[RMDB]
RNA sequence: GGGAACGACUCGAGUAGAGUCGAAAACUGCCGGGCCUUGCCUUGACUGGGUUUCGGAGUCUCUUUAGACUUACGGACCCUAAAUUUGGCAGGGCGGACCGCUCUGCCAUUUUGUUUAUGUCGAAAGCUAGAUCGGUGUAUUCGUACACCGAUCUAGAAAAGAAACAACAACAACAAC
Reactivity to DMS in 0.01 (KOAc 150mM, MgCl2 10mM, bicine 150mM(pH8.5), 24C), signal-to-noise 1, nucleotides 027 to 126: c050u000g000c060c000g010g010g000c010c100u000u000g000c080c040u000u010g020a100c050u010g000g030g010u000u020u040c020g010g000a040g000u030c000u000c220u020u010u030a030g000a020c000u000u020a060c020g000g000a010c040c000c000u030a000a050a060u000u010u000g020g000c000a030g000g000g030c000g000g020a100c200c110g000c000u000c000u000g020c010c000a000u000u000u020u000g000u000u000u020a090u050g000u000c070g010a100a110a100g030
Reactivity to 2A3 in 0.01 (KOAc 150mM, MgCl2 10mM, bicine 150mM(pH8.5), 24C), signal-to-noise 3, nucleotides 027 to 126: c030u070g010c030c000g030g040g000c010c040u090u160g060c020c000u030u080g050a060c060u040g000g010g000u010u060u180c000g010g000a000g000u000c010u000c040u080u150u300a000g000a000c000u030u150a120c010g010g010a000c000c000c000u010a040a050a020u030u040u030g000g000c010a000g010g000g000c030g010g080a060c030c050g000c000u000c000u000g000c000c010a020u020u020u040u040g070u030u150u050a170u120g030u000c010g000a030a070a060g050
This 177-nucleotide RNA was probed chemically with DMS and 2A3. For 2A3 the reverse transcriptase was SuperScript II with manganese.